[RMDB]
RNA sequence: GGGAACGACUCGAGUAGAGUCGAAAAGGGCCAGCUGUUUUUUAAGUUUUUGCCCCAUCUGGAGCUCUCGGCCGUCGCGCGCUUGGCGGGUAUUAACAUCACCCGCACCAUCUACGACGGCCAGCAGAUCCGCGUCUUUACGUGCCUGCUGCGCCUGAUCACAAAACACAUUCGUGUGUUUUGUGAUAAAAGAAACAACAACAACAAC
Reactivity to DMS in 0.01 (KOAc 150mM, MgCl2 10mM, bicine 150mM(pH8.5), 24C), signal-to-noise 1, nucleotides 027 to 156: g040g040g010c010c130a070g030c010u010g000u000u000u020u000u010u000a060a130g040u000u000u000u000u010g020c030c010c030c040a090u000c060u010g010g010a070g000c070u010c060u010c070g010g040c000c010g020u000c020g000c040g040c080g000c120u010u000g040g010c020g000g030g020u000a110u000u000a120a170c160a150u020c140a030c030c000c000g050c020a040c010c030a060u010c030u000a040c020g010a080c010g020g000c010c000a040g030c050a040g010a010u010c010c010g010c060g010u000c100u000u000u010a030c020g010u030g020c100c030u000g010c010u000g020c040g010c130c010u000g000
Reactivity to 2A3 in 0.01 (KOAc 150mM, MgCl2 10mM, bicine 150mM(pH8.5), 24C), signal-to-noise 3, nucleotides 027 to 156: g000g020g000c010c020a020g010c040u070g190u100u060u030u040u090u200a180a110g050u100u060u030u210u200g070c020c010c000c000a070u090c100u090g080g010a040g040c020u000c030u060c120g010g000c010c000g010u010c010g000c000g000c010g050c110u050u080g030g010c010g020g030g000u040a100u120u120a120a120c100a090u120c080a030c000c000c000g000c010a030c010c010a030u010c030u070a010c020g010a010c000g000g010c000c000a000g010c000a000g000a020u040c050c010g000c020g010u000c110u060u210u140a030c030g020u040g060c010c010u010g010c000u020g000c040g010c030c010u020g020
An RNA of 207 nucleotides, treated with DMS and 2A3 and read out base by base.
The data come from the RNA Mapping Database (RMDB), library OK3TST.